This 207-nucleotide RNA was probed chemically with 2A3. Reactivities are given for positions 27 through 156. The reactions ran in a buffer of 150 mM KOAc, 10 mM MgCl2 and 150 mM bicine (pH 8.5), at 24 C. It was measured as part of the RMDB library RNAMAK. For 2A3, 794 sequencing reads were counted.
[RMDB]
RNA sequence: GGGAACGACUCGAGUAGAGUCGAAAAACACCUCUUUCGAGAGGUGUAAAAAAACCUUUGUGCAGCAAUGGGAGCUUGGAUUUAGCGAUCCCAUUGGGAUCGCUUGUCAGCUUAGUUGGCUGCACUCUGGUAAAAAAGAACCAGUUCGCUGGUUCAAGUAUGUCUCCUCUUUCGAGAGGAGACAUACAAAAGAAACAACAACAACAAC
Reactivity to 2A3 in 0.01 (KOAc 150mM, MgCl2 10mM, bicine 150mM(pH8.5), 24C), signal-to-noise 2, nucleotides 027 to 156: a000c010a010c020c010u000c040u060u090u300c280g100a020g000a000g000g000u010g010u010a000a010a000a020a000a000a000c040c000u050u000u000g000u000g000c000a000g000c010a030a010u090g290g300g120a030g010c040u140u160g110g030a040u300u300u070a010g020c000g000a010u020c030c050c160a300u100u230g000g000g000a010u020c020g000c000u000u010g010u010c010a000g030c000u000u020a020g000u010u060g300g020c040u000g010c000a000c000u000c000u010g000g000u060a200a080a000a000a000a040g000a000a010c000c000a000g050u110u090c220g080c150u000g000g000u040u000c000a000a020